[RMDB]
RNA sequence: GGGAACGACUCGAGUAGAGUCGAAAAGACAGAACCAAAAAAUUUUAUGUGUGUUAGACACAGUUGCAUUGCCCAUGUAGCUUUGGGGUAUCGUGUAUUUUAAUCUAGGGCCUAGUUCCCUAACGAGGUCGAAAGAUUGUUUCGACAAUCUUUCGACAAAAGAAACAACAACAACAAC
Reactivity to DMS in 0.01 (KOAc 150mM, MgCl2 10mM, bicine 150mM(pH8.5), 24C), signal-to-noise 2, nucleotides 027 to 126: g000a110c050a100g010a080a150c040c020a000a030a020a020a160a110u000u000u000u000a080u030g030u000g010u010g000u010u000a120g020a140c010a010c000a030g010u010u000g010c000a030u000u010g000c020c040c030a240u010g000u000a060g000c060u000u000u000g020g000g010g020u000a020u000c070g030u000g050u000a030u000u000u010u010a090a030u000c080u000a080g020g000g040c010c150u000a120g000u030u000c000c000c000u000a030a060c250g000a080g000
Background: The record gives the reactivity of an RNA of 177 nucleotides to DMS. DMS adducts were read by reverse transcription with MarathonRT. Conditions: 150 mM KOAc, 10 mM MgCl2 and 150 mM bicine (pH 8.5), 24 C. Reactivities are given for positions 27 through 126. DMS (dimethyl sulfate) methylates the pairing face of unpaired adenines and cytosines. For DMS, 1,046 sequencing reads were counted.